[RMDB]
RNA sequence: GGGAACGACUCGAGUAGAGUCGAAAAAGGUGGUAAAUUCCAUCUAAAGCUAAAUAUUGGUGCGAGACCGAUAGCGAACAAGUACCGUGAGGGAAAGAUGAAAAGAACUUUGAAAAGAGAGUUAAAGUGGGUAUUUAUUCUUCGGAAUAAAUACCCAAAAAGAAACAACAACAACAAC
Reactivity to 2A3 in 0.01 (KOAc 150mM, MgCl2 10mM, bicine 150mM(pH8.5), 24C), signal-to-noise 1, nucleotides 027 to 126: a000g000g010u040g000g000u010a010a130a130u170u050c000c000a000u040c000u030a040a040a040g030c000u040a000a180a060u160a140u110u140g010g000u050g010c110g050a050g070a000c000c000g000a000u070a030g120c110g000a020a040c110a170a000g070u000a000c000c010g010u030g180a120g030g000g000a000a000a140g030a010u200g060a040a130a000a000g010a000a000c000u000u000u080g120a000a030a040a130g160a000g030a050g000u100u140a010a170a000g300
Reactivity to DMS in 0.01 (KOAc 150mM, MgCl2 10mM, bicine 150mM(pH8.5), 24C), signal-to-noise 4, nucleotides 027 to 126: a000g000g030u010g000g000u000a040a110a120u040u010c000c000a030u010c000u000a090a060a150g000c040u020a040a110a150u000a100u020u010g020g010u000g010c170g010a190g000a050c020c010g000a040u000a020g010c060g020a130a140c080a040a040g000u000a130c050c010g000u020g010a100g000g000g000a030a050a090g000a100u020g000a060a020a080a070g020a080a020c040u010u000u000g010a090a050a090a100g000a060g020a080g010u000u000a060a050a090g050
This 177-nucleotide RNA was probed chemically with 2A3 and DMS. DMS adducts were read by reverse transcription with MarathonRT. It was measured as part of the RMDB libraries RFM100 and RFMREP.